This 177-nucleotide RNA was probed chemically with DMS. The reactions ran in a buffer of 150 mM KOAc, 10 mM MgCl2 and 150 mM bicine (pH 8.5), at 24 C.

[RMDB]
RNA sequence: GGGAACGACUCGAGUAGAGUCGAAAAUUCGAUGGAAACGGUCGUGCUGCGGAUGAAGCAGGCGGCGCGCACCGCGUCGGCGGUCGCGAAGUGGCUCGCGACGAAUCCGCAUCAGAAGGUCGACGUACGCUCGUAGUACCUUCGGGUACUACGAGCGAAAAGAAACAACAACAACAAC
Reactivity to DMS in 0.01 (KOAc 150mM, MgCl2 10mM, bicine 150mM(pH8.5), 24C), signal-to-noise 2, nucleotides 027 to 126: u000u000c030g020a060u000g030g000a060a150a100c090g020g010u000c010g010u000g000c170u000g030c000g020g000a040u000g000a070a300g000c040a040g000g040c050g000g010c020g010c000g070c210a020c070c010g000c000g000u020c260g000g020c020g000g010u000c040g000c020g050a020a010g030u000g000g020c070u000c210g030c000g000a080c060g000a130a030u000c020c000g000c010a060u000c040a110g010a140a100g030g000u000c030g010a100c050g010u020a010
DMS adducts were read by reverse transcription with MarathonRT.